[RMDB]
Background
The record gives the reactivity of an RNA of 177 nucleotides to DMS and 2A3. Values cover nucleotides 27 to 126. Source: RMDB libraries RFM100 and RFMREP, as collected in RNAgym.

RNA sequence: GGGAACGACUCGAGUAGAGUCGAAAAGAAAGAAAGAACGUGAGUUGGGUCCGGGCCUGUAUGGGGCUCAACGAGUUUGGUGCGGCUCAGGAGAGCCUUCGCCGAACGUCCUCAAGAGUGCGGAAAAUAUAUUACACGUGUUCGCACGUGUAAUAUAAAAAGAAACAACAACAACAAC
Reactivity to DMS in 0.01 (KOAc 150mM, MgCl2 10mM, bicine 150mM(pH8.5), 24C), signal-to-noise 9, nucleotides 027 to 126: g000a090a070a090g010a090a080a100g010a070a070c100g020u020g000a130g020u010u010g010g000g000u000c020c030g000g010g010c030c020u010g000u020a070u040g010g010g010g000c050u000c010a030a040c070g000a120g010u000u000u000g000g010u000g020c300g000g000c010u000c010a250g010g010a190g000a010g000c010c000u000u030c020g000c000c010g000a010a010c000g000u010c030c030u000c100a080a040g000a050g000u000g000c000g000g000a090a030a070a150
Reactivity to 2A3 in 0.01 (KOAc 150mM, MgCl2 10mM, bicine 150mM(pH8.5), 24C), signal-to-noise 7, nucleotides 027 to 126: g060a010a050a010g100a030a110a000g110a080a030c070g100u110g070a120g030u040u010g020g000g000u000c010c020g020g130g030c010c010u070g000u050a180u180g030g000g010g000c000u010c010a000a020c030g010a020g010u000u030u020g020g000u020g010c020g000g000c000u000c020a180g100g280a300g070a020g060c000c000u090u160c010g000c000c000g000a000a000c010g040u050c010c010u040c020a010a040g060a030g050u100g030c030g030g020a020a030a050a000